[RMDB]
RNA sequence: GGGAACGACUCGAGUAGAGUCGAAAACUCGCUGCGUUCGCGCAGCGAGAAAAAAGCGUACUACUCGUGGUGGCCAGCAACAGCGUUUCCCAAAUAGGAAACGACAUGCUGGCACCAUACGAGUAUCGCAAAAAACUGCGUGUUUCGACACGCAGAAACCUAUAGUCAGCUUCGGCUGACUAUAGGUAAAAGAAACAACAACAACAAC
Reactivity to 2A3 in 0.01 (KOAc 150mM, MgCl2 10mM, bicine 150mM(pH8.5), 24C), signal-to-noise 1, nucleotides 027 to 156: c010u000c010g000c000u010g040c010g010u020u160c210g010c000g000c210a010g080c000g000a020g010a010a000a010a010a000a010g020c030g050u080a080c040u000a010c000u000c000g040u010g000g000u010g060g300c010c000a000g010c030a010a120c030a130g020c000g000u050u030u080c010c010c010a170a300a130u270a080g010g000a000a000a000c010g150a050c010a130u040g000c000u000g000g000c010a000c000c010a010u020a010c020g000a000g020u000a000u090c000g000c000a000a000a000a000a000a170c000u030g000c000g000u040g030u070u060u180c150g090a000c010a000c000g000c030a010g000a060a010
An RNA of 207 nucleotides, treated with 2A3 and read out base by base. Conditions: 150 mM KOAc, 10 mM MgCl2 and 150 mM bicine (pH 8.5), 24 C. For 2A3 the reverse transcriptase was SuperScript II with manganese.